[RMDB]
Structure probing data (DMS and 2A3) for a 207-nucleotide construct. DMS adducts were read by reverse transcription with MarathonRT. Values are in units of 0.01, from 0 to 300, in steps of 10. The 2A3 profile rests on 2,762 reads. The reactions ran in a buffer of 150 mM KOAc, 10 mM MgCl2 and 150 mM bicine (pH 8.5), at 24 C.
RNA sequence: GGGAACGACUCGAGUAGAGUCGAAAAAGGCAUAGGACAGCUGUAUUGGAGUUUGCCUGACAUAUUUAAGCCACCAGUAACCUUCAAAAUGGAACAAAAAGUAGAGAUGUCUCCAGUGGUUGGGACUCAAUUGUUCCCACUUAUUGGAAAAUCUGUACAUUUAAUCAUGGUUCGCCAUGAUUAAAUGAAAAGAAACAACAACAACAAC
Reactivity to DMS in 0.01 (KOAc 150mM, MgCl2 10mM, bicine 150mM(pH8.5), 24C), signal-to-noise 4, nucleotides 027 to 156: a040g030g030c020a070u000a150g020g020a300c030a090g040c040u010g000u010a140u000u010g010g010a200g020u000u000u000g030c030c010u000g020a070c040a050u000a070u000u000u000a100a140g010c030c010a090c050c050a110g020u000a100a140c040c010u000u000c050a030a080a120a130u000g000g020a090a160c070a050a050a070a100a110g020u000a090g010a130g000a080u000g000u010c020u000c010c030a050g030u000g010g010u010u000g020g010g010a050c010u000c050a070a120u000u000g030u000u010c000c000c010a080c240u000u000a030u000u010g000g000a070a040a110a160u000c010u000g000u000a250
Reactivity to 2A3 in 0.01 (KOAc 150mM, MgCl2 10mM, bicine 150mM(pH8.5), 24C), signal-to-noise 4, nucleotides 027 to 156: a000g060g000c040a060u080a040g030g060a050c030a030g030c040u120g050u230a180u120u150g050g010a060g050u070u080u060g020c000c000u020g000a020c020a050u210a050u100u130u060a050a030g020c000c010a030c010c000a020g030u060a040a060c020c000u040u060c080a050a060a080a200u150g050g010a060a030c030a050a120a110a020a010g040u100a040g030a020g010a080u060g060u040c030u010c030c010a030g020u020g010g020u070u050g010g000g000a000c010u040c080a100a180u190u120g000u060u000c000c020c000a020c000u200u230a070u020u040g000g000a000a040a000a120u010c010u020g050u050a010